RNA sequence: GGGAACGACUCGAGUAGAGUCGAAAAGGGCGGAAGAGUCUUCUGACACUUCUAGCCUAUUCAGCUUCGCGUCCUUGAGGCCUGGCGUAACGCGGCUCUUGCCACCAGGUUGCCUCCGCUAGUCGAGGAUACAACUCGUGUUCGCACGAGUUGUAUCAAAAGAAACAACAACAACAAC
Reactivity to DMS in 0.01 (KOAc 150mM, MgCl2 10mM, bicine 150mM(pH8.5), 24C), signal-to-noise 2, nucleotides 027 to 126: g000g000g020c030g000g020a010a000g010a110g030u000c000u020u000c270u020g000a010c020a090c000u000u010c000u000a070g020c000c000u000a020u000u000c040a090g010c030u000u000c070g000c070g010u010c030c000u000u000g000a150g000g010c030c050u000g000g000c270g000u020a020a110c190g010c040g010g010c060u000c050u000u000g000c010c020a080c050c030a100g000g010u000u000g000c050c020u000c050c060g010c090u010a090g000u000c060g020a110g010
Reactivity to 2A3 in 0.01 (KOAc 150mM, MgCl2 10mM, bicine 150mM(pH8.5), 24C), signal-to-noise 1, nucleotides 027 to 126: g010g000g000c020g000g030a000a010g020a040g030u000c000u220u100c180u220g020a020c000a010c030u000u000c020u070a060g010c010c000u010a030u010u110c010a020g000c050u030u090c010g040c020g070u000c010c060u020u070g030a050g000g010c000c040u030g050g000c060g080u080a140a100c110g000c060g080g040c000u050c030u090u130g000c020c010a060c000c020a020g020g000u060u050g030c010c000u070c000c000g030c040u040a040g090u130c020g060a030g080

The data come from the RNA Mapping Database (RMDB), library VIROID.
This 177-nucleotide RNA was probed chemically with DMS and 2A3.
For 2A3 the reverse transcriptase was SuperScript II with manganese.
The reactions ran in a buffer of 150 mM KOAc, 10 mM MgCl2 and 150 mM bicine (pH 8.5), at 24 C.